[RMDB]
RNA sequence: GGGAACGACUCGAGUAGAGUCGAAAAGUAAAAGUCGUGGAAAUCACCAACAACAAGGAAAGCCACGUAAUGGCUGACAAUCAAACAGCCAGCAACGCACAACCAAAAGUGCAUGCAGCUCACAACAGCGCCCCCAACUUUGCACCUGGGAAGGUAGUAUCCAGUACUUUUUCGAAAGUACUGGAUAAAAAGAAACAACAACAACAAC
Reactivity to 2A3 in 0.01 (KOAc 150mM, MgCl2 10mM, bicine 150mM(pH8.5), 24C), signal-to-noise 2, nucleotides 027 to 156: g040u070a000a080a040a110g060u080c000g020u010g000g020a070a120a160u120c020a050c150c020a060a120c040a020a050c040a090a100g030g000a130a000a020g040c000c000a010c020g000u060a040a040u050g000g000c000u000g030a050c070a030a120u140c050a020a020a060c000a000g000c000c030a000g000c000a020a070c080g010c000a020c020a060a110c030c090a100a080a140a000g030u000g020c010a000u080g000c020a010g010c030u080c050a080c020a080a150c000a050g090c030g040c020c010c010c000c000a010a010c050u070u060u120g020c030a030c020c000u020g000g030g000a040a040g030g000u010a020g010
Reactivity to DMS in 0.01 (KOAc 150mM, MgCl2 10mM, bicine 150mM(pH8.5), 24C), signal-to-noise 1, nucleotides 027 to 156: g010u000a050a090a050a180g070u020c060g100u010g040g040a110a230a080u000c090a140c030c110a110a050c080a180a130c210a090a110g070g000a070a100a210g000c030c010a020c030g010u000a020a130u000g060g030c000u000g010a070c060a020a100u020c190a040a090a130c000a090g000c000c000a040g070c020a160a100c070g020c020a110c030a030a180c090c050a050a150a040a210g030u000g020c000a130u000g000c040a150g020c010u000c040a020c140a010a060c160a020g000c040g040c000c000c010c000c040a060a190c000u000u000u010g010c000a090c090c050u010g000g020g010a080a110g000g000u000a050g010